[RMDB]
RNA sequence: GGGAACGACUCGAGUAGAGUCGAAAAAGUGUCGCCUGUUCGCGUCGAAGGAUCGAUCUGUUUUCGAUCAUAUAUCAGUUUCGGUAUAGCAAUCAUCAAAGAUCGCAUUUGACAGUUAUGUCAAAGGACCAUAUUGCGCAUUCGUGCGCAAUAUGGUAAAAGAAACAACAACAACAAC
Reactivity to DMS in 0.01 (KOAc 150mM, MgCl2 10mM, bicine 150mM(pH8.5), 24C), signal-to-noise 3, nucleotides 027 to 126: a070g010u000g010u010c040g020c020c010u000g000u030u010c050g020c140g000u020c050g000a130a080g000g000a070u010c000g010a040u030c140u040g010u000u010u020u000c080g020a000u000c030a070u000a020u010a040u000c100a100g000u010u010u000c080g000g010u030a040u010a060g020c120a080a050u000c030a020u010c230a090a110a060g010a040u000c040g000c100a180u020u000u010g010a010c010a060g000u050u030a080u010g000u000c000a000a010a030g030g000
Reactivity to 2A3 in 0.01 (KOAc 150mM, MgCl2 10mM, bicine 150mM(pH8.5), 24C), signal-to-noise 2, nucleotides 027 to 126: a000g150u090g030u030c000g000c020c000u000g000u000u050c040g000c010g080u030c040g040a090a060g120g000a100u030c010g000a040u030c010u030g160u140u110u040u060c050g000a010u000c010a000u020a000u000a000u020c030a040g100u060u050u070c030g000g010u050a030u040a100g120c070a040a030u020c040a010u080c050a170a020a130g040a020u050c020g000c110a140u020u000u000g030a030c030a020g090u300u180a220u110g000u030c020a000a000a000g020g010